[RMDB]
RNA sequence: GGGAACGACUCGAGUAGAGUCGAAAAUGAACCCGCUAAUCCACCCCAACUCUUGCCCCGACGUUCACUCCACGCGCUAAUUCCCGGGGGCCCCACAGCCCCCACACUCCCUCUCGGCCCGAGGCUCCGUGUCUAAAAAUUUCGAUUUUUAGACACGAAAAGAAACAACAACAACAAC
Reactivity to 2A3 in 0.01 (KOAc 150mM, MgCl2 10mM, bicine 150mM(pH8.5), 24C), signal-to-noise 6, nucleotides 027 to 126: u060g010a030a050c010c010c000g020c050u080a060a070u040c020c010a030c020c010c010c020a030a070c030u020c020u050u090g030c010c010c010c000g030a030c030g040u030u050c030a030c040u020c020c010a020c020g040c000g000c020u040a070a070u050u030c010c000c010g000g000g000g000g000c020c010c020c010a060c010a020g000c000c000c000c010c000a000c000a010c010u020c000c000c000u010c000u010c020g030g000c000c000c010g020a030g020g010c000u020c020
Reactivity to DMS in 0.01 (KOAc 150mM, MgCl2 10mM, bicine 150mM(pH8.5), 24C), signal-to-noise 5, nucleotides 027 to 126: u020g000a120a140c040c020c020g030c080u020a110a090u010c030c040a090c040c010c020c050a100a090c060u000c040u010u020g000c020c000c030c010g010a070c090g000u000u030c040a070c030u000c020c020a050c040g000c030g010c040u000a090a190u000u000c000c010c020g020g020g010g000g010c020c040c060c180a070c160a170g010c010c000c010c010c000a030c070a040c090u010c040c020c000u000c030u000c080g000g000c000c040c030g010a080g000g010c050u020c080
Structure probing data (2A3 and DMS) for a 177-nucleotide construct. Conditions: 150 mM KOAc, 10 mM MgCl2 and 150 mM bicine (pH 8.5), 24 C. The 2A3 profile rests on 15,490 reads. Source: RMDB libraries RFM100 and RFMREP, as collected in RNAgym.